[RMDB]
RNA sequence: GGGAACGACUCGAGUAGAGUCGAAAACAGGGUUCUUUAAUCUGUUUCUCUAUAAGAACACUCAAUUUUCACGCUUUCUGUCUUCUUUCUUCCAGGGCUCUCCCCUUGCCCUAGGCUCUGGCCGUUGACUCAUAUUCGCUUUCGAGCGAAUAUGAGUAAAAGAAACAACAACAACAAC
Reactivity to 2A3 in 0.01 (KOAc 150mM, MgCl2 10mM, bicine 150mM(pH8.5), 24C), signal-to-noise 3, nucleotides 027 to 126: c060a020g030g040g030u080u050c030u030u190u110a110a150u060c050u050g060u020u090u000c030u010c030u040a120u050a170a020g040a060a000c030a040c020u070c040a150a200u040u040u120u090c070a070c030g050c020u010u070u040c010u060g060u010c010u060u030c000u040u120u000c020u080u020c020c010a010g000g000g040c010u000c030u020c020c000c000c000u020u080g040c000c000c000u020a030g020g010c020u030c020u050g060g010c030c010g040u030u060g040
Reactivity to DMS in 0.01 (KOAc 150mM, MgCl2 10mM, bicine 150mM(pH8.5), 24C), signal-to-noise 2, nucleotides 027 to 126: c030a100g010g030g020u000u010c040u000u000u000a070a060u010c070u000g000u020u010u000c010u010c070u000a090u010a030a040g000a010a060c030a080c050u000c100a090a080u010u010u020u010c040a120c060g000c080u000u000u000c020u000g030u010c040u010u000c010u010u000u000c020u010u000c040c050a100g020g000g020c010u010c120u000c010c000c010c040u000u000g000c010c000c000u030a090g020g000c030u010c030u000g000g020c130c060g040u010u040g000
Notes:
Source: RMDB library RFM100, as collected in RNAgym. Structure probing data (2A3 and DMS) for a 177-nucleotide construct. The reactions ran in a buffer of 150 mM KOAc, 10 mM MgCl2 and 150 mM bicine (pH 8.5), at 24 C. The DMS profile rests on 3,053 reads. For 2A3 the reverse transcriptase was SuperScript II with manganese.